[RMDB]
Source: RMDB library OK1LIB, as collected in RNAgym. This 177-nucleotide RNA was probed chemically with 2A3. For 2A3 the reverse transcriptase was SuperScript II with manganese. As a SHAPE reagent, 2A3 marks flexible, mostly unpaired nucleotides at the ribose 2'-OH. Values cover nucleotides 27 to 126.
RNA sequence: GGGAACGACUCGAGUAGAGUCGAAAACGUCGAUGUACUGACACCAGUCAGCCUUAACCGCAAGGAUCGAUUCCGUAAUUGUCACAUGGUGCAGCAUGCCGAGACUCGCGGUCAAAACCCGCCUGGGCCCGUUCCACUCGUUCGCGAGUGGAACGGGAAAAGAAACAACAACAACAAC
Reactivity to 2A3 in 0.01 (KOAc 150mM, MgCl2 10mM, bicine 150mM(pH8.5), 24C), signal-to-noise 2, nucleotides 027 to 126: c040g000u090c010g000a040u050g080u300a050c030u020g040a010c000a070c090c100a020g040u030c040a040g020c000c000u000u160a060a070c020c000g010c050a010a010g070g000a000u010c010g080a100u080u080c080c000g160u270a140a020u080u050g070u070c080a040c030a110u110g000g000u140g050c050a040g000c000a000u080g070c020c060g070a000g000a000c010u000c050g000c040g030g020u000c000a020a050a060a070c000c000c000g110c100c060u120g020g020g000